Overview
Chemical mapping of a 207-nucleotide RNA with 2A3 and DMS. Source: RMDB library RNAMAK, as collected in RNAgym. For 2A3, 3,673 sequencing reads were counted. DMS adducts were read by reverse transcription with MarathonRT. The reactions ran in a buffer of 150 mM KOAc, 10 mM MgCl2 and 150 mM bicine (pH 8.5), at 24 C.

RNA sequence: GGGAACGACUCGAGUAGAGUCGAAAAGGUGACGGUUCGCCGUCACCAAAGAUAUGGAGCGACUGGAGCUUUUGACGCCUUUCCCGUCGGAAACGACGGGUAGGGCGAUAAGCUCCACAUGUCGCUCCUAAGUCAAAGCGAGCAGUUCGCUGCUCGCCAUUACGCAUUGGUUCGCCAAUGCGUAAUGAAAAGAAACAACAACAACAAC
Reactivity to 2A3 in 0.01 (KOAc 150mM, MgCl2 10mM, bicine 150mM(pH8.5), 24C), signal-to-noise 3, nucleotides 027 to 156: g000g000u000g000a000c010g000g050u020u090c280g070c100c000g010u000c000a000c000c010a010a000a000g000a000u050a020u150g000g000a000g000c000g000a000c040u050g010g000a010g010c020u040u040u060u130g240a110c020g000c010c000u000u030u060c000c000c000g000u000c010g000g040a110a040a060c030g000a000c020g000g030g000u000a000g010g000g020c000g000a000u030a000a000g010c000u000c000c000a010c000a010u020g000u000c000g000c000u000c000c000u000a000a000g010u000c040a080a060a030g000c000g000a000g000c000a000g010u050u180c230g050c170u000g000c000u010c010g000c000
Reactivity to DMS in 0.01 (KOAc 150mM, MgCl2 10mM, bicine 150mM(pH8.5), 24C), signal-to-noise 1, nucleotides 027 to 156: g000g030u000g020a030c000g040g060u000u000c300g080c080c000g020u000c000a000c010c000a030a020a040g010a110u000a090u010g000g000a020g030c000g020a020c030u010g000g020a080g010c000u000u000u000u030g010a200c020g050c000c000u010u000u000c000c000c040g030u000c000g000g010a110a060a240c020g040a030c000g000g020g020u000a010g000g020g040c000g000a010u000a010a030g000c000u000c000c000a020c130a050u010g020u010c020g000c030u000c000c000u000a010a100g000u000c040a060a080a140g020c000g020a020g000c000a020g000u000u000c300g000c030u000g000c000u000c000g020c000